[RMDB]
This 177-nucleotide RNA was probed chemically with DMS and 2A3. DMS adducts were read by reverse transcription with MarathonRT. The DMS profile rests on 2,406 reads. The data come from the RNA Mapping Database (RMDB), library TTRINS. The reactions ran in a buffer of 150 mM KOAc, 10 mM MgCl2 and 150 mM bicine (pH 8.5), at 24 C.
RNA sequence: GGGAACGACUCGAGUAGAGUCGAAAAGAUAUGGACUCCAGGUGGGGAUGCUUCCCGAAGAACCGUUGCUGUUCGGAAACGAACAGCAACGGGGAGGGAAGACCCAUCUAGUUUGGAGUCCUAAGUCGAUUACGUAUUCGUUCGCGAAUACGUAAUCAAAAGAAACAACAACAACAAC
Reactivity to DMS in 0.01 (KOAc 150mM, MgCl2 10mM, bicine 150mM(pH8.5), 24C), signal-to-noise 2, nucleotides 027 to 126: g020a130u010a300u010g000g010a010c000u010c000c000a040g030g040u010g000g000g010g010a120u030g010c010u000u000c000c000c020g000a120a210g010a140a230c020c000g030u000u010g020c000u000g010u000u010c000g010g000a110a100a300c010g020a030a010c010a000g000c020a010a000c000g000g000g010g000a040g000g000g000a010a000g010a050c020c010c000a020u010c010u010a080g010u010u000u000g030g000a030g010u000c010c000u010a000a120g030u010c090
Reactivity to 2A3 in 0.01 (KOAc 150mM, MgCl2 10mM, bicine 150mM(pH8.5), 24C), signal-to-noise 2, nucleotides 027 to 126: g020a010u180a090u300g000g000a000c000u040c060c050a040g000g000u020g000g180g000g010a060u270g150c010u000u000c000c000c060g080a210a030g040a040a010c000c000g030u020u010g040c010u000g050u020u000c030g030g000a100a120a040c000g040a000a000c020a000g080c010a010a000c000g000g000g000g010a010g020g020g000a000a000g000a000c010c000c020a000u000c010u000a050g060u090u240u260g000g020a000g000u000c000c010u000a000a010g090u060c070